This 177-nucleotide RNA was probed chemically with DMS and 2A3. The RNA was probed in 150 mM KOAc, 10 mM MgCl2 and 150 mM bicine (pH 8.5) at 24 C. Source: RMDB libraries RFM100 and RFMREP, as collected in RNAgym.

[RMDB]
RNA sequence: GGGAACGACUCGAGUAGAGUCGAAAAUGAAAAGAUAUCGAGCGCGCCCCAAGAUUUCCUCACCCGCGUCGGAGACGCGGGGAAGAGCGCAAGAGCAUACGGAAGUCUGACAGUGUCCGGCCUAACGUCACCUUUAUAUGUUCGCAUAUAAAGGUGAAAAAGAAACAACAACAACAAC
Reactivity to DMS in 0.01 (KOAc 150mM, MgCl2 10mM, bicine 150mM(pH8.5), 24C), signal-to-noise 6, nucleotides 027 to 126: u030g000a090a080a100a110g000a120u020a060u010c010g000a120g010c020g010c300g000c040c010c050c110a070a040g000a060u000u000u000c010c010u010c100a200c020c010c000g040c020g030u000c030g010g010a250g000a040c010g020c000g060g000g000g010a050a100g000a070g020c050g020c190a080a110g010a130g000c020a090u010a100c110g010g000a030a030g010u010c020u000g010a110c130a080g000u010g000u010c020c030g010g010c020c010u010a040a070c190g000
Reactivity to 2A3 in 0.01 (KOAc 150mM, MgCl2 10mM, bicine 150mM(pH8.5), 24C), signal-to-noise 4, nucleotides 027 to 126: u160g030a020a040a000a070g110a050u090a020u120c050g000a020g050c040g000c000g020c020c010c010c010a030a010g000a050u010u010u030c010c000u030c030a040c000c000c000g000c000g000u010c060g170g120a300g000a080c000g000c020g000g000g000g010a050a020g010a010g000c070g000c010a060a050g060a020g030c030a050u080a120c050g040g000a010a010g020u020c030u040g080a030c040a090g060u040g030u110c030c020g010g010c010c010u070a110a040c030g030